[RMDB]
RNA sequence: GGGAACGACUCGAGUAGAGUCGAAAAAAUUGAAAGAUCGCUUUGACGAGCCUAAUGUGGAAGAGCCGUUUGGAGUGCCUGUAGUGUUAUAAUUAGUAAUUGUAGAUAGGUGUAGUUUUGAUAGGGACAUACAGAGUACUUUCGAGUACUCUGUAUGAAAAGAAACAACAACAACAAC
Reactivity to DMS in 0.01 (KOAc 150mM, MgCl2 10mM, bicine 150mM(pH8.5), 24C), signal-to-noise 8, nucleotides 027 to 126: a060a060u020u020g000a060a040a060g000a090u010c030g010c030u010u030u000g010a090c040g010a100g010c010c020u000a050a060u020g020u010g000g000a090a050g000a100g010c130c060g010u000u010u000g010g010a080g020u000g000c050c010u010g000u000a050g020u010g010u010u010a040u020a050a050u010u010a100g010u010a060a040u000u010g010u010a040g000a070u010a030g010g010u000g010u000a050g010u000u000u010u000g000a110u010a070g000g000g010a230
Reactivity to 2A3 in 0.01 (KOAc 150mM, MgCl2 10mM, bicine 150mM(pH8.5), 24C), signal-to-noise 8, nucleotides 027 to 126: a000a000u230u200g030a060a020a010g080a080u070c020g020c050u090u090u120g020a030c000g000a010g010c000c000u140a160a130u120g040u060g020g030a030a040g010a000g020c020c030g040u010u060u100g070g020a060g010u030g040c010c030u030g020u090a080g020u020g050u130u050a090u030a150a140u100u050a030g060u070a040a140u040u090g040u060a050g030a150u070a060g000g030u050g020u040a090g010u030u040u020u050g060a080u090a050g050g010g010a010
Structure probing data (DMS and 2A3) for a 177-nucleotide construct. The RNA was probed in 150 mM KOAc, 10 mM MgCl2 and 150 mM bicine (pH 8.5) at 24 C. For DMS the reverse transcriptase was MarathonRT.